[RMDB]
Structure probing data (DMS) for a 177-nucleotide construct. The DMS profile rests on 472 reads.
RNA sequence: GGGAACGACUCGAGUAGAGUCGAAAACUAGUCUAGGGGAGAAUAAACGCGCAACAAACUGGACAUUUAUCCAGUGUCGAAAUACCAUUUUGAUCGAGAUAAAUCACAGUAAGUGUUCAACAUGCAAUCGAUACCGACUCUUCGGAGUCGGUAUCGAAAAAGAAACAACAACAACAAC
Reactivity to DMS in 0.01 (KOAc 150mM, MgCl2 10mM, bicine 150mM(pH8.5), 24C), signal-to-noise 1, nucleotides 027 to 126: c020u000a120g040u000c040u000a070g000g050g040g000a220g000a150a050u040a030a050a110c110g020c150g060c160a050a010c060a070a140a010c010u000g000g000a170c300a070u000u040u010a040u010c000c060a150g000u000g010u000c010g000a020a000a040u000a250c240c220a090u000u000u020u000g000a010u000c020g000a120g010a090u020a020a000a000u000c150a200c000a000g000u000a000a270g040u010g000u000u010c170a000a100c110a090u000g040c090a060a190